[RMDB]
RNA sequence: GGGAACGACUCGAGUAGAGUCGAAAAGAUAGUCAGCACAUUACAGGUGCUCGAAUUUCAAAAGAUGGGUUUCACCCCGCAGGGUGUGGAUACCUAUUUCAAUACCAGGGCAAUGGGUGAGGCGAAAUAUCCCACUACAUUUCGAUGUAGUGGGAUAAAAAGAAACAACAACAACAAC
Reactivity to 2A3 in 0.01 (KOAc 150mM, MgCl2 10mM, bicine 150mM(pH8.5), 24C), signal-to-noise 2, nucleotides 027 to 126: g040a040u120a030g050u070c030a000g020c030a010c020a000u040u260a170c100a190g090g090u010g000c030u020c010g030a040a110u070u110u140c050a050a080a030a040g080a060u070g050g000g010u000u010u010c000a010c000c010c020c040g100c070a080g010g000g080u100g000u010g050g000a030u110a110c010c030u010a050u010u040u030c030a090a040u070a120c020c040a020g030g060g010c030a070a070u100g030g090g030u070g040a050g020g050c030g020a100a000a000
Reactivity to DMS in 0.01 (KOAc 150mM, MgCl2 10mM, bicine 150mM(pH8.5), 24C), signal-to-noise 5, nucleotides 027 to 126: g000a070u000a060g010u000c040a030g010c010a020c020a060u020u010a170c300a170g020g010u000g010c010u000c090g020a040a050u000u000u000c090a070a120a100a100g010a030u000g010g000g000u000u000u000c010a020c020c030c000c070g000c230a100g010g010g020u010g030u000g000g000a020u000a050c050c030u000a030u000u000u000c090a090a070u000a090c050c030a070g000g000g000c070a070a070u000g010g010g010u010g000a060g010g000c040g000a040a090a140
The record gives the reactivity of an RNA of 177 nucleotides to 2A3 and DMS.
For 2A3, 2,056 sequencing reads were counted.
Source: RMDB library OK2TRN, as collected in RNAgym.
2A3 adducts were read by reverse transcription with SuperScript II with manganese.